[RMDB]
RNA sequence: GGGAACGACUCGAGUAGAGUCGAAAACAGGCAAAAAGCGCGCUGGAAAAACCAGCUGCGCACGACAGCCAAACAAGCCGUGAAAUGCUGUCUAUGAAAUGAAAUCAUGGCAAAACAACAAACAAAACGACUGUCAUGCUUUCGAGCAUGACAGUCGAAAAGAAACAACAACAACAAC
Reactivity to 2A3 in 0.01 (KOAc 150mM, MgCl2 10mM, bicine 150mM(pH8.5), 24C), signal-to-noise 1, nucleotides 027 to 126: c050a020g030g070c020a200a000a000a000a000g000c030g000c000g020c030u010g040g010a020a000a090a000a090c010c020a040g010c090u300g000c030g000c000a000c000g000a000c050a000g000c050c000a020a000a070c010a050a000g000c000c000g000u000g000a010a010a010u110g010c000u000g020u050c020u110a280u140g030a040a080a080u120g040a020a000a000u000c000a020u020g000g000c000a000a200a000a000c160a020a000c050a240a030a000c020a090a130a000a000
Record summary: An RNA of 177 nucleotides, treated with 2A3 and read out base by base. Source: RMDB library OK1LIB, as collected in RNAgym. Conditions: 150 mM KOAc, 10 mM MgCl2 and 150 mM bicine (pH 8.5), 24 C.